[RMDB]
RNA sequence: GGGAACGACUCGAGUAGAGUCGAAAACCCUCAGCGUCAGCCUAACUCUUCGAAAAGAGACCUCCAUCGCACCGCAGUGAUUCUGUGCAAUCUUGCGGCCCAAUCACGGGAGAGAACGCUGAGCGUACAGAAUUGAUAACUUCGGUUAUCAAUUCUGAAAAGAAACAACAACAACAAC
Reactivity to DMS in 0.01 (KOAc 150mM, MgCl2 10mM, bicine 150mM(pH8.5), 24C), signal-to-noise 4, nucleotides 027 to 126: c010c010c000u000c030a030g010c000g010u000c050a130g000c070c090u000a130a190c000u010c000u030u010c170g000a080a110a110a070g000a020g000a220c080c020u010c040c040a070u000c080g030c190a150c000c010g000c000a000g020u010g000a020u000u000c010u010g020u010g020c120a030a020u000c010u020u010g000c020g010g000c070c050c030a090a080u020c120a110c130g020g000g000a060g000a080g010a090a030c080g010c010u000g000a050g010c100g020u010a120
Reactivity to 2A3 in 0.01 (KOAc 150mM, MgCl2 10mM, bicine 150mM(pH8.5), 24C), signal-to-noise 4, nucleotides 027 to 126: c010c010c000u010c030a010g000c010g020u020c030a030g080c030c020u070a120a100c010u010c010u110u100c150g160a160a130a070a050g050a020g010a130c030c000u040c020c010a130u080c060g040c050a010c010c010g000c010a050g070u020g140a010u030u000c040u160g300u120g090c060a010a000u010c000u000u010g020c000g020g040c010c020c000a020a020u160c020a010c110g030g040g000a010g000a010g010a040a000c010g000c000u010g000a010g000c010g000u040a060

The data come from the RNA Mapping Database (RMDB), library RFMREP. The record gives the reactivity of an RNA of 177 nucleotides to DMS and 2A3. For 2A3 the reverse transcriptase was SuperScript II with manganese. The RNA was probed in 150 mM KOAc, 10 mM MgCl2 and 150 mM bicine (pH 8.5) at 24 C.